Source information
An RNA of 177 nucleotides, treated with 2A3 and DMS and read out base by base. High DMS reactivity at an A or C suggests that its Watson-Crick edge is free. For 2A3, 1,719 sequencing reads were counted. Conditions: 150 mM KOAc, 10 mM MgCl2 and 150 mM bicine (pH 8.5), 24 C. The DMS profile rests on 3,062 reads.

RNA sequence: GGGAACGACUCGAGUAGAGUCGAAAAGAAAAAAGAGUGCCCAUGGCUCUCCAACAUUUUGGAUGGGAAGUCAUGAAGUAAAUGGGACAUGGAUGAUCCACACCUUGGAGGCAUUAGAUUACAAGGAUGAUGAAUGUUUGUUCGCAAACAUUCAUCAAAAAGAAACAACAACAACAAC
Reactivity to 2A3 in 0.01 (KOAc 150mM, MgCl2 10mM, bicine 150mM(pH8.5), 24C), signal-to-noise 2, nucleotides 027 to 126: g040a000a090a040a010a000a000g090a000g030u000g030c000c000c000a020u010g000g000c000u040c030u000c030c010a140a060c020a060u160u220u250u300g100g020a080u040g040g000g000a010a000g010u010c030a010u000g000a010a010g120u160a010a110a160u130g030g000g000a020c030a050u120g150g030a120u110g070a080u070c020c000a030c010a040c040c000u010u060g020g040a010g020g000c010a000u020u110a040g060a140u130u160a050c030a010a040g020g030a050
Reactivity to DMS in 0.01 (KOAc 150mM, MgCl2 10mM, bicine 150mM(pH8.5), 24C), signal-to-noise 3, nucleotides 027 to 126: g010a020a050a060a100a080a120g000a130g010u000g020c000c020c010a000u000g010g000c010u000c040u000c020c000a050a140c050a160u010u010u010u000g000g020a180u000g000g010g010a040a010g010u000c000a010u000g000a090a090g000u020a030a070a120u000g020g000g010a030c070a090u000g000g010a130u010g000a140u010c020c010a110c150a100c010c000u010u000g000g000a120g010g000c040a050u000u010a040g010a090u000u000a080c040a010a030g000g010a300